[RMDB]
RNA sequence: GGGAACGACUCGAGUAGAGUCGAAAAGUAGGACAUUAUACUGAUAACCAAUCGAAGCAGAUAAUUGAUAUCAGUGAGGCGCUCAUAAAAGUUAAUACCUUAACUCCUGAUGAUGCAGUAAAGGCCAAAUUACGGACCAGUUCGCUGGUCCGUAAUUAAAAGAAACAACAACAACAAC
Reactivity to DMS in 0.01 (KOAc 150mM, MgCl2 10mM, bicine 150mM(pH8.5), 24C), signal-to-noise 3, nucleotides 027 to 126: g010u000a010g000g000a130c050a050u030u020a070u060a050c000u010g010a040u000a060a070c110c060a050a040u020c100g010a150a240g020c210a060g000a110u020a110a060u000u010g000a160u010a010u000c000a010g020u000g010a100g040g000c070g000c010u000c040a100u040a050a090a080a070g020u000u010a070a060u000a110c200c090u000u000a110a060c070u000c110c010u050g010a030u010g000a070u010g020c000a020g010u020a040a040a050g000g010c100c050a030
Reactivity to 2A3 in 0.01 (KOAc 150mM, MgCl2 10mM, bicine 150mM(pH8.5), 24C), signal-to-noise 2, nucleotides 027 to 126: g100u070a000g000g070a040c050a090u110u060a060u080a100c030u010g010a040u060a110a110c120c000a000a030u020c040g060a160a070g060c080a060g040a110u150a070a040u180u140g000a050u020a000u020c000a010g000u050g030a030g000g040c020g040c050u010c040a160u150a180a100a010a010g030u030u100a020a100u130a120c000c000u090u040a050a000c010u000c010c020u010g060a100u060g000a030u120g000c010a000g030u120a130a060a050g030g000c000c000a000

An RNA of 177 nucleotides, treated with DMS and 2A3 and read out base by base.
2A3 adducts were read by reverse transcription with SuperScript II with manganese.
The RNA was probed in 150 mM KOAc, 10 mM MgCl2 and 150 mM bicine (pH 8.5) at 24 C.
It was measured as part of the RMDB library OK1LIB.
DMS adducts were read by reverse transcription with MarathonRT.